[RMDB]
RNA sequence: GGGAACGACUCGAGUAGAGUCGAAAAACGGGCAGUGGCGAUGGCAACGCGGCAGCCGCAGGGUCGACUUCUUCGCAGCCGCAACAGACGGGAUACGGGCAAAGAGGGGUGCUCGUUCUGUUGGAAGGACGAUUAUCGGUUUCGACCGAUAAUCGUCAAAAGAAACAACAACAACAAC
Reactivity to DMS in 0.01 (KOAc 150mM, MgCl2 10mM, bicine 150mM(pH8.5), 24C), signal-to-noise 1, nucleotides 027 to 126: a050c010g000g000g020c080a020g000u000g010g000c000g010a130u130g030g020c070a080a140c290g000c000g000g030c000a180g010c050c090g000c020a050g000g000g040u030c240g000a060c250u010u020c060u010u010c040g000c030a300g010c000c000g000c020a120a050c140a050g030a070c050g010g000g000a010u090a000c020g040g010g000c090a030a070a170g050a090g000g000g000g090u060g000c020u000c050g060u000u000c050u000g000u060u000g000g030a130a120g000
Reactivity to 2A3 in 0.01 (KOAc 150mM, MgCl2 10mM, bicine 150mM(pH8.5), 24C), signal-to-noise 3, nucleotides 027 to 126: a000c010g000g010g000c020a060g010u070g080g000c060g060a070u100g060g000c040a060a050c070g010c020g040g000c020a010g050c050c020g000c030a010g010g050g010u060c030g060a070c010u060u010c000u070u040c060g000c030a040g000c020c000g000c000a010a010c020a010g040a030c010g010g040g010a010u050a090c010g000g050g000c020a070a100a000g070a050g010g030g020g010u030g000c000u000c000g000u050u000c000u010g030u000u000g030g010a070a060g080

Structure probing data (DMS and 2A3) for a 177-nucleotide construct. For 2A3, 2,420 sequencing reads were counted. For DMS, 1,126 sequencing reads were counted. The reactions ran in a buffer of 150 mM KOAc, 10 mM MgCl2 and 150 mM bicine (pH 8.5), at 24 C.